[RMDB]
RNA sequence: GGGAACGACUCGAGUAGAGUCGAAAAUCGACCGACAAGGCGACCGGGGCCUAUCUGGCGUCGGUGCUGGUGCCGAUUCAGGCGCGAACGGUGGAACUGUGAUGGCCAAGCAACCGGUUCUAAAGAUCGACACCCGCGCAAUCGCGAAGAUUGCGAAUGAUUAGUGAUGUUUCGACAUCACUAAUCAAAAAGAAACAACAACAACAAC
Reactivity to DMS in 0.01 (KOAc 150mM, MgCl2 10mM, bicine 150mM(pH8.5), 24C), signal-to-noise 3, nucleotides 027 to 156: u010c020g020a070c010c000g010a120c060a080a180g030g020c010g000a110c020c020g020g000g010g020c000c010u010a080u010c190u000g030g010c030g020u010c000g010g020u000g020c030u000g000g010u010g030c010c000g010a090u010u000c060a150g000g000c010g010c040g010a090a090c050g030g000u010g000g010a050a040c030u010g030u030g010a140u000g030g020c050c060a120a170g020c040a070a050c030c000g000g010u000u000c020u000a100a090a090g000a060u010c000g010a250c030a060c010c000c030g020c020g020c000a030a010u000c000g030c090g000a150a280g020a040u000u000g020c020g000a060a190
Reactivity to 2A3 in 0.01 (KOAc 150mM, MgCl2 10mM, bicine 150mM(pH8.5), 24C), signal-to-noise 7, nucleotides 027 to 156: u030c010g040a030c020c000g040a070c040a090a100g040g010c030g030a030c000c010g000g000g020g000c010c000u120a270u260c210u190g040g030c160g300u010c010g000g000u010g010c010u040g020g050u040g010c000c000g010a010u100u170c100a070g050g000c020g010c030g060a140a070c030g030g020u040g030g030a020a020c010u030g040u100g060a080u090g090g000c070c070a080a020g030c010a050a110c010c010g010g010u020u000c000u060a090a060a040g020a050u020c030g020a000c030a070c070c010c000g000c000g010c010a010a000u000c010g020c060g160a120a040g000a010u000u010g000c000g010a030a100